[RMDB]
RNA sequence: GGGAACGACUCGAGUAGAGUCGAAAAACACGUUACGACGUGAUGCUAUGGAUAAGGCUUUGGCUUAUGGGGAUAUUGUGGUUGAUCUGUUCUAUCCAGAUGACUGAAACUUUCUCCAUAGCAGCAACUUUGGGCUAAGGUUCGCCUUAGCCCAAAGAAAAGAAACAACAACAACAAC
Reactivity to 2A3 in 0.01 (KOAc 150mM, MgCl2 10mM, bicine 150mM(pH8.5), 24C), signal-to-noise 5, nucleotides 027 to 126: a000c010a010c010g010u040u090a110c260g020a020c010g060u030g000a040u050g000c000u020a020u020g010g000a020u020a010a020g000g030c000u010u030u010g030g010c020u090u030a030u120g130g000g000g010a010u010a050u070u130g050u040g040g090u080u190g110a090u130c000u010g040u060u030c020u040a070u010c000c010a040g000a080u030g060a100c000u010g010a020a040a000c010u000u030u020c020u000c000c000a000u000a000g000c000a000g010c000a020a100
Reactivity to DMS in 0.01 (KOAc 150mM, MgCl2 10mM, bicine 150mM(pH8.5), 24C), signal-to-noise 2, nucleotides 027 to 126: a050c000a020c010g010u030u040a070c220g000a020c000g020u050g000a110u010g000c000u000a000u010g000g030a050u000a020a020g000g030c050u000u000u000g000g000c140u000u050a000u010g000g020g000g000a020u000a000u000u010g000u010g020g010u000u040g000a120u040c040u000g000u000u000c020u010a070u000c030c000a030g000a050u000g020a080c000u000g000a010a000a020c010u000u010u000c090u000c000c000a010u000a030g000c010a030g000c210a100a070